[RMDB]
RNA sequence: GGGAACGACUCGAGUAGAGUCGAAAAAAGAGCGAGGAAGAGUACCGCAAAGUCGUAUCCUCUCUGUUCGAGGAGCUGUCCCCGGCGGUGCCCGAGUCCGAGGAGAAGCAUCCUCCGUGCCACAAAGGCUCCUACGCUGGUUCGCCAGCGUAGGAGCAAAAGAAACAACAACAACAAC
Reactivity to 2A3 in 0.01 (KOAc 150mM, MgCl2 10mM, bicine 150mM(pH8.5), 24C), signal-to-noise 1, nucleotides 027 to 126: a000a000g220a000g000c210g000a110g100g000a150a040g130a060g130u130a050c000c000g060c160a170a180a060g050u040c030g000u010a200u130c000c020u040c000u000c090u010g210u050u060c010g000a000g000g000a140g010c080u080g090u090c000c070c000c000g000g000c000g020g000u000g010c000c000c000g010a000g070u070c030c020g040a020g040g000a060g000a090a000g090c000a090u000c000c000u000c000c000g000u000g040c040c000a010c000a070a020a000g010
An RNA of 177 nucleotides, treated with 2A3 and read out base by base. Reactivities are given for positions 27 through 126. The 2A3 profile rests on 488 reads. Conditions: 150 mM KOAc, 10 mM MgCl2 and 150 mM bicine (pH 8.5), 24 C.